[RMDB]
RNA sequence: GGGAACGACUCGAGUAGAGUCGAAAAUAAUUGGCGAAAACAAUUACGCUCUCGCUGCCUAAUCGAAGUACAGUAGAUUACUGGCUUUAUUCGACUAUUAGAUAGUUGAACGAGACACUGCUCCAAAGAUGUUGUUCCGAAUCGGAGGGUAAAGCGGCGUAUGUAGGUUCUUCGGAACCUACAUACGAAAAGAAACAACAACAACAAC
Reactivity to 2A3 in 0.01 (KOAc 150mM, MgCl2 10mM, bicine 150mM(pH8.5), 24C), signal-to-noise 4, nucleotides 027 to 156: u060a010a030u050u010g060g000c100g070a030a060a060a090c040a010a050u080u060a050c060g030c100u010c000u000c010g020c060u050g010c000c010u030a020a020u000c010g060a050a000g100u210a280c070a080g000u030a030g000a070u020u030a060c120u100g000g000c000u020u050u040a040u000u010c000g000a000c010u020a020u170u090a130g210a300u030a010g020u000u020g010a020a010c010g000a010g000a030c020a000c070u060g000c010u010c010c010a020a040a020g040a020u140g000u030u010g010u010u010c010c000g000a040a030u100c040g020g030a040g000g000g040u100a070a060a010g070c010g020g010
Reactivity to DMS in 0.01 (KOAc 150mM, MgCl2 10mM, bicine 150mM(pH8.5), 24C), signal-to-noise 2, nucleotides 027 to 156: u000a080a070u000u000g010g000c010g040a170a210a220a170c010a050a020u000u000a020c070g030c070u000c010u010c010g000c040u000g020c010c030u000a030a090u000c030g000a060a300g040u010a060c090a070g010u000a130g000a070u000u020a050c050u000g030g000c010u010u000u000a210u010u000c010g020a010c010u000a020u000u020a160g010a300u000a040g060u000u000g010a010a020c050g010a040g010a010c040a100c020u000g000c010u010c020c010a070a120a120g000a180u000g010u000u000g000u010u000c010c000g060a050a100u010c050g020g030a080g000g000g040u010a020a080a110g010c000g020g000
Source information:
Chemical mapping of a 207-nucleotide RNA with 2A3 and DMS. The RNA was probed in 150 mM KOAc, 10 mM MgCl2 and 150 mM bicine (pH 8.5) at 24 C. Values cover nucleotides 27 to 156. High 2A3 reactivity points to a flexible backbone, as in loops and unpaired stretches.